[RMDB]
RNA sequence: GGGAACGACUCGAGUAGAGUCGAAAAGGUGGCUCGUUGUGUGCUCACUUCUCGGCGGAGAACGAGUCACCGAUUUAGCAUGUUCGUCCUACGAUCUCGGUGGGGUACCUGUAGGACGUUCAUGCGAGGGAAGGUUAUCCUUCGGGAUGACCUUCCCAAAAGAAACAACAACAACAAC
Reactivity to 2A3 in 0.01 (KOAc 150mM, MgCl2 10mM, bicine 150mM(pH8.5), 24C), signal-to-noise 9, nucleotides 027 to 126: g000g000u000g000g010c000u000c010g010u020u030g150u050g090u070g130c030u080c100a110c090u290u100c090u080c090g040g010c030g010g140a090g030a050a000c000g000a000g000u000c000a000c000c000g000a000u000u010u060a010g000c000a000u000g000u000u000c000g000u000c010c000u000a020c010g070a130u050c050u040c110g210g070u300g070g090g010g030u100a140c030c050u130g000u000a000g000g000a000c000g000u000u000c000a000u000g000c000g000a090
Reactivity to DMS in 0.01 (KOAc 150mM, MgCl2 10mM, bicine 150mM(pH8.5), 24C), signal-to-noise 3, nucleotides 027 to 126: g010g000u010g010g010c000u010c020g020u000u000g000u010g010u010g000c000u000c160a100c110u020u020c070u010c100g020g020c020g000g010a060g000a010a000c010g000a000g020u000c000a000c010c000g010a020u030u020u020a130g000c000a000u000g000u000u000c000g010u000c010c000u010a000c010g000a070u030c020u010c020g030g020u030g030g010g020g010u030a030c140c070u030g000u000a000g000g000a020c000g000u010u000c000a010u000g010c010g000a100
An RNA of 177 nucleotides, treated with 2A3 and DMS and read out base by base. Reactivities are rounded to 0.1 and cut off at 0 and 3. It was measured as part of the RMDB library OK1LIB. The reactions ran in a buffer of 150 mM KOAc, 10 mM MgCl2 and 150 mM bicine (pH 8.5), at 24 C.